[RMDB]
RNA sequence: GGGAACGACUCGAGUAGAGUCGAAAAGAUAUGGAGAGAGCGACGAUCUCCACGUAUCGGAAACGAUAUGGAGGGAGCUCCUCCUAAGUCAAACCGAAUGGCGCUAGUUCGCUAGCGCCAUUCGGAAGACAUACCUUGACUUCGGUCAAGGUAUGUCAAAAGAAACAACAACAACAAC
Reactivity to 2A3 in 0.01 (KOAc 150mM, MgCl2 10mM, bicine 150mM(pH8.5), 24C), signal-to-noise 1, nucleotides 027 to 126: g010a020u080a040u110g000g000a050g020a010g000a000g010c010g300a300c020g000a100u000c010u000c040c000a060c200g060u040a000u030c000g060g000a080a040a070c030g000a020u010a010u050g000g020a000g000g000g000a000g010c000u020c030c000u000c000c000u000a120a030g040u010c050a110a030a060c020c030g000a030a000u010g010g040c030g000c010u000a000g050u110u050c250g030c210u000a000g030c010g000c010c000a010u010u000c000g000g000a010a000
Reactivity to DMS in 0.01 (KOAc 150mM, MgCl2 10mM, bicine 150mM(pH8.5), 24C), signal-to-noise 2, nucleotides 027 to 126: g000a040u000a300u000g000g020a030g000a210g000a010g030c000g010a030c190g000a030u000c000u000c000c010a090c260g030u000a010u000c000g010g000a030a090a200c000g030a000u000a040u000g000g010a030g000g000g000a010g010c060u000c000c000u000c000c010u040a010a070g000u030c010a090a130a160c020c000g000a020a000u000g000g000c040g010c010u000a000g000u000u020c170g020c010u000a000g000c000g000c000c000a000u000u000c040g000g000a010a040
This 177-nucleotide RNA was probed chemically with 2A3 and DMS. For DMS the reverse transcriptase was MarathonRT. Source: RMDB library TTRDEL, as collected in RNAgym. For 2A3 the reverse transcriptase was SuperScript II with manganese.